[RMDB]
RNA sequence: GGGAACGACUCGAGUAGAGUCGAAAACACACGUGCACCUCUGGCGCGUGCAGUGACACUUGCAGUCGCCCUGCAUCUCCGUCUCCGAUUGCUCAAAGACCUGGCCAGAGCGCUCACAAGCUGUCUCGGGUAAUCGAUCCUUCGGGAUCGAUUACCCAAAAGAAACAACAACAACAAC
Reactivity to 2A3 in 0.01 (KOAc 150mM, MgCl2 10mM, bicine 150mM(pH8.5), 24C), signal-to-noise 2, nucleotides 027 to 126: c050a000c030a000c020g010u000g000c050a090c070c030u090c100u170g100g000c080g000c010g010u050g000c030a000g020u090g060a020c000a000c040u060u070g020c020a030g050u130c080g030c030c000c000u000g010c030a030u030c000u020c030c000g070u010c000u000c030c050g120a140u070u220g020c020u050c060a100a050a000g020a100c030c010u010g080g000c030c020a040g000a040g050c060g000c070u000c010a070c010a010a000g030c040u040g050u120c010u010c010